Structure probing data (2A3 and DMS) for a 207-nucleotide construct. The reactions ran in a buffer of 150 mM KOAc, 10 mM MgCl2 and 150 mM bicine (pH 8.5), at 24 C. Source: RMDB library OK3TST, as collected in RNAgym. For 2A3, 983 sequencing reads were counted. Values cover nucleotides 27 to 156. For DMS the reverse transcriptase was MarathonRT.
RNA sequence: GGGAACGACUCGAGUAGAGUCGAAAAUAUAGUGAAUGCCAAUCAGAUAAAAGAGCUGGUUCCAGAACUCAGUUUAGAUACUGGGACACUGGAGAAAAAGUCAGGAGCUUGUGAAGAUCAUAGUAUGGCUCAAGCUGGUGAAGUCGUGCUGAAGAUGCACUCAACAUUACUUCGGUAAUGUUGAGUGAAAAGAAACAACAACAACAAC
Reactivity to 2A3 in 0.01 (KOAc 150mM, MgCl2 10mM, bicine 150mM(pH8.5), 24C), signal-to-noise 2, nucleotides 027 to 156: u100a010u060a020g050u020g080a070a050u100g010c020c030a010a080u050c020a020g060a080u090a080a180a030a050g040a010g060c040u090g040g000u090u000c000c000a010g020a060a050c000u000c010a000g010u000u050u070a040g030a050u150a030c040u010g000g000g040a010c050a050c100u000g000g000a010g050a020a060a000a000a000g030u010c010a020g040g010a050g040c020u070u030g040u010g020a070a060g030a010u040c020a000u050a060g070u090a050u110g070g000c030u020c010a020a020g050c000u040g000g020u030g050a060a010g020u080c040g030u020g020c040u040g030a050a000g090a030u200g010
Reactivity to DMS in 0.01 (KOAc 150mM, MgCl2 10mM, bicine 150mM(pH8.5), 24C), signal-to-noise 2, nucleotides 027 to 156: u000a080u000a110g040u000g020a080a130u010g010c010c030a070a110u030c070a130g020a190u030a110a060a150a090g010a130g000c000u000g000g000u020u010c010c000a070g010a180a300c000u000c020a000g030u020u000u010a180g000a220u000a010c040u000g000g000g030a180c070a270c020u010g010g050a070g020a060a090a090a030a170g030u000c070a080g000g000a120g010c020u000u000g010u000g000a100a070g000a050u000c010a070u010a070g090u000a110u010g020g020c010u000c030a030a110g030c010u000g010g030u010g010a070a100g010u000c090g000u000g000c060u010g010a070a100g010a160u020g000